[RMDB]
RNA sequence: GGGAACGACUCGAGUAGAGUCGAAAAGGGACAUAGUAAGCUCCCCAAAAGCACCAAGCUUAGCUGGGAAGCACGAUGGGUGAGGCAUGGACCUUAUUUCACAGCAAAGUGGCUCAGGUGAGGCAGGCAAGGAAUGGGCAAAUCACGACAUGACAUAUAUCAUCCUCCUUUUCGAAGGAGGAUGAUAAAAAGAAACAACAACAACAAC
Reactivity to 2A3 in 0.01 (KOAc 150mM, MgCl2 10mM, bicine 150mM(pH8.5), 24C), signal-to-noise 2, nucleotides 027 to 156: g000g000g020a000c010a050u090a080g030u090a040a180g000c020u070c000c000c000c010a020a170a000a000g070c040a000c110c030a090a000g010c020u110u110a040g040c030u040g010g000g030a140a010g050c030a000c100g090a040u030g020g010g030u150g060a020g030g070c010a040u050g040g020a050c000c000u030u070a100u000u140u020c080a060c030a030g060c020a080a080a000g010u030g040g080c040u060c030a000g010g040u070g000a010g010g000c040a000g000g040c010a050a000g050g000a070a060u090g040g000g010c020a040a060a060u070c060a030c050g040a000c040a080u110g100a040c060a030u240a020
Reactivity to DMS in 0.01 (KOAc 150mM, MgCl2 10mM, bicine 150mM(pH8.5), 24C), signal-to-noise 2, nucleotides 027 to 156: g040g000g000a120c030a040u000a040g140u000a090a140g040c020u010c000c000c000c050a010a090a070a070g030c060a160c030c160a060a190g010c040u000u000a120g090c070u000g010g000g000a080a090g050c030a080c000g010a160u000g000g000g020u030g020a050g040g010c030a170u000g000g000a160c020c020u000u000a070u000u000u000c050a110c030a150g030c060a100a080a100g030u000g020g020c000u020c030a090g000g060u020g020a160g020g040c030a040g050g020c080a070a050g030g000a110a100u020g000g010g040c040a010a100a080u000c030a110c060g040a050c080a300u000g040a140c040a000u010a170